[RMDB]
RNA sequence: GGGAACGACUCGAGUAGAGUCGAAAACUCAGUAAUCACACGGGGCAGCUCGUGGCUGCCACAUUGUGCAGCACAGAUUACAGAACAUGCCCAUGGUACUGGCAAGUUCUAUCGGACAGUGCAGGUCACUAUAUGGUCCUUUCGAGGACCAUAUAGUAAAAGAAACAACAACAACAAC
Reactivity to 2A3 in 0.01 (KOAc 150mM, MgCl2 10mM, bicine 150mM(pH8.5), 24C), signal-to-noise 6, nucleotides 027 to 126: c010u020c020a040g030u080a040a040u070c020a000c010a000c070g030g000g040g000c030a080g060c020u070c100g170u150g160g000c000u000g000c000c000a040c010a100u100u180g030u070g030c060a030g010c010a020c010a070g040a040u030u100a040c020a050g010a010a010c010a040u060g020c030c040c030a080u170g180g020u150a100c070u050g030g000c020a020a060g010u030u020c040u060a100u130c040g030g010a020c030a050g000u030g070c030a020g060g100u110c040
Reactivity to DMS in 0.01 (KOAc 150mM, MgCl2 10mM, bicine 150mM(pH8.5), 24C), signal-to-noise 9, nucleotides 027 to 126: c020u000c030a150g020u000a020a050u010c010a300c040a040c130g010g000g010g010c140a060g010c010u000c260g010u010g010g010c000u000g000c000c010a040c140a070u000u010g030u000g020c110a090g020c010a060c090a090g000a080u000u000a030c050a040g010a020a030c030a090u000g010c010c010c100a110u010g010g020u010a090c170u010g000g010c030a070a070g000u000u000c010u000a080u010c100g010g000a110c150a090g020u000g000c030a140g010g000u000c100